[RMDB]
An RNA of 207 nucleotides, treated with 2A3 and read out base by base.
2A3 adducts were read by reverse transcription with SuperScript II with manganese.
For 2A3, 750 sequencing reads were counted.
The reactions ran in a buffer of 150 mM KOAc, 10 mM MgCl2 and 150 mM bicine (pH 8.5), at 24 C.
RNA sequence: GGGAACGACUCGAGUAGAGUCGAAAAUGAACAAAAAUGAGAAAGAUAUACGCAAAUAUAAAACAAAUUAGAGUUAGUACGUCUAUACCACAAAACGCACAACUUCUAUGGCAAAAUAAUAACUUAGCUCUAUAUUAUACCUAUGAUCCUUCUCAAGGGAGGAAAGAUCAUUCGUGAUCUUUCCUCCAAAAGAAACAACAACAACAAC
Reactivity to 2A3 in 0.01 (KOAc 150mM, MgCl2 10mM, bicine 150mM(pH8.5), 24C), signal-to-noise 1, nucleotides 027 to 156: u070g000a040a020c010a020a130a030a000a010u050g010a010g060a030a180a030g040a000u050a020u010a090c040g020c000a200a150a000u100a000u140a090a190a040a020c060a090a120a030u130u060a040g010a000g030u000u080a000g030u030a010c000g010u000c020u050a110u040a100c050c080a040c010a070a070a090a030c030g010c000a040c040a090a040c020u240u080c030u040a020u070g040g020c010a080a120a000a030u150a120a080u110a040a020c010u040u080a040g000c030u000c010u000a040u010a030u050u080a070u040a080c000c000u000a030u040g000a030u040c000c010u040u000c010u020c020a020a060g040